An RNA of 177 nucleotides, treated with 2A3 and DMS and read out base by base. The RNA was probed in 150 mM KOAc, 10 mM MgCl2 and 150 mM bicine (pH 8.5) at 24 C.
RNA sequence: GGGAACGACUCGAGUAGAGUCGAAAAGAUAUGGACGAAAGCUUUGAUCUAUGUCGAACUCGGAAACGAGUUCGAGCAUAGGGAGCUUGUCCUAAGUCAAACAGACUUGCGUUCGCGCAAGUCUGAACGAUUAGAUCAAGUUCGCUUGAUCUAAUCGAAAAGAAACAACAACAACAAC
Reactivity to 2A3 in 0.01 (KOAc 150mM, MgCl2 10mM, bicine 150mM(pH8.5), 24C), signal-to-noise 7, nucleotides 027 to 126: g010a020u080a040u160g010g010a010c050g300a250a070a020g000c020u300u190u090g060a060u060c000u020a010u000g010u020c000g000a000a000c000u000c000g000g040a070a070a040c010g000a000g000u000u000c000g000a010g000c000a000u000a000g010g000g010a000g000c000u030u030g000u000c000c000u020a150a030g050u030c030a040a060a100c000a020g000a000c000u000u000g010c000g050u040u100c300g000c000g000c150a010a000g000u010c000u000g000a030a010
Reactivity to DMS in 0.01 (KOAc 150mM, MgCl2 10mM, bicine 150mM(pH8.5), 24C), signal-to-noise 7, nucleotides 027 to 126: g010a030u000a300u010g000g000a010c010g010a120a040a040g010c000u000u000u010g020a080u010c010u000a000u000g010u000c000g000a000a000c000u000c000g010g000a080a080a190c010g020a020g010u000u000c000g000a050g020c000a000u000a010g000g000g000a010g010c000u000u010g010u000c000c000u010a030a120g000u000c030a090a140a300c020a000g000a010c000u000u000g000c000g010u000u010c220g020c010g020c000a000a010g000u000c000u000g010a040a130
It was measured as part of the RMDB library TTRDEL.